Structure probing data (DMS) for a 177-nucleotide construct.
The DMS profile rests on 1,782 reads.
Conditions: 150 mM KOAc, 10 mM MgCl2 and 150 mM bicine (pH 8.5), 24 C.

[RMDB]
RNA sequence: GGGAACGACUCGAGUAGAGUCGAAAAUGAAACGAAGGGGGGACGGAGAAGGCUAUGUUGGCCGGGCGACGGUUGUCCCGGUUUAAGCGUGUAGGCUGGUUUUCCAGGCAAAUCCGGAGAUAAAAAACUAAGCAGAAAAGUUCGCUUUUCUGCUUAGAAAAGAAACAACAACAACAAC
Reactivity to DMS in 0.01 (KOAc 150mM, MgCl2 10mM, bicine 150mM(pH8.5), 24C), signal-to-noise 2, nucleotides 027 to 126: u000g020a080a060a100c060g000a090a090g000g000g000g020g020g000a080c050g020g000a050g000a080a080g000g000c040u000a030u010g000u000u000g000g010c000c000g000g020g020c300g010a070c160g010g010u010u000g000u010c010c000c000g010g000u000u000u010a030a080g000c030g030u000g000u000a060g010g000c000u000g010g020u000u020u010u010c010c030a160g000g010c070a050a080a110u000c020c010g000g000a110g010a160u020a020a040a060a090a070a130